[RMDB]
RNA sequence: GGGAACGACUCGAGUAGAGUCGAAAAGAUAUGGAAUGGUGAAACCGUGAACUACAUUCGGGCAAAGGUCUCGGAAACGAGACCUUUGUCUCUAGCGUGAUGCACGGGAGUAUGCCAUUCCUAAGUCGUCAGACAUCAACUUCGGUUGAUGUCUGACAAAAGAAACAACAACAACAAC
Reactivity to DMS in 0.01 (KOAc 150mM, MgCl2 10mM, bicine 150mM(pH8.5), 24C), signal-to-noise 1, nucleotides 027 to 126: g000a110u000a300u000g000g000a010a010u010g000g000u000g000a280a170a110c010c030g000u000g010a060a040c000u000a020c020a100u000u000c200g000g010g000c010a000a000a020g000g000u000c000u010c000g010g000a140a100a130c030g000a010g020a000c000c000u010u000u000g000u020c000u000c060u000a020g010c120g040u000g000a120u010g000c010a010c000g000g000g000a070g000u000a060u010g000c010c020a000u000u000c000c000u000a010a020g000u000c090
Structure probing data (DMS) for a 177-nucleotide construct. Conditions: 150 mM KOAc, 10 mM MgCl2 and 150 mM bicine (pH 8.5), 24 C. Values cover nucleotides 27 to 126.